[RMDB]
RNA sequence: GGGAACGACUCGAGUAGAGUCGAAAAACAUAGUUUACUGAUGUUAGAGAAAGAGCCUUUCGUUGAACUAAAAGGGAGAGAUGUAGAGAGAAUUUCUUGUGUACUGUGUGGAAGAAUUGCCUGUCAAUAAAAAGCUGAUGGCCUAUUAGCAAGAGGAGCCAUUUAAAUGGUUCGCCAUUUAAAUGGCAAAAGAAACAACAACAACAAC
Reactivity to DMS in 0.01 (KOAc 150mM, MgCl2 10mM, bicine 150mM(pH8.5), 24C), signal-to-noise 2, nucleotides 027 to 156: a040c040a060u000a080g020u000u010u000a140c050u000g010a110u010g010u010u000a090g000a160g010a080a100a130g000a110g010c020c010u010u010u000c060g020u000u000g010a100a150c050u010a050a030a060a060g040g020g020a080g000a050g000a090u010g010u000a080g010a110g020a160g020a110a060u010u000u030c030u000u010g010u000g010u000a120c040u000g030u000g010u020g020g010a110a050g040a080a120u010u010g030c010c040u000g020u000c080a030a140u020a050a060a060a100a140g040c060u010g000a070u000g000g030c070c030u000a110u010u000a050g030c030a060a090g000a100g030g000a200
Reactivity to 2A3 in 0.01 (KOAc 150mM, MgCl2 10mM, bicine 150mM(pH8.5), 24C), signal-to-noise 3, nucleotides 027 to 156: a000c020a030u160a040g040u070u100u130a070c030u100g030a060u050g020u070u080a040g000a000g010a050a120a020g020a020g030c010c000u070u100u060c100g080u050u090g050a070a070c030u070a080a040a040a100g030g010g000a020g000a000g000a030u060g020u120a040g010a000g010a010g000a080a070u080u080u020c020u040u060g030u010g020u020a060c030u030g000u000g010u040g080g030a030a030g010a060a100u030u020g020c000c010u050g030u070c030a020a020u090a120a100a020a020a000g030c040u060g010a030u080g060g000c010c000u070a080u170u050a060g070c040a060a020g250a040g040g020a010
Annotation: The record gives the reactivity of an RNA of 207 nucleotides to DMS and 2A3. The RNA was probed in 150 mM KOAc, 10 mM MgCl2 and 150 mM bicine (pH 8.5) at 24 C. For 2A3, 1,580 sequencing reads were counted. The DMS profile rests on 2,595 reads.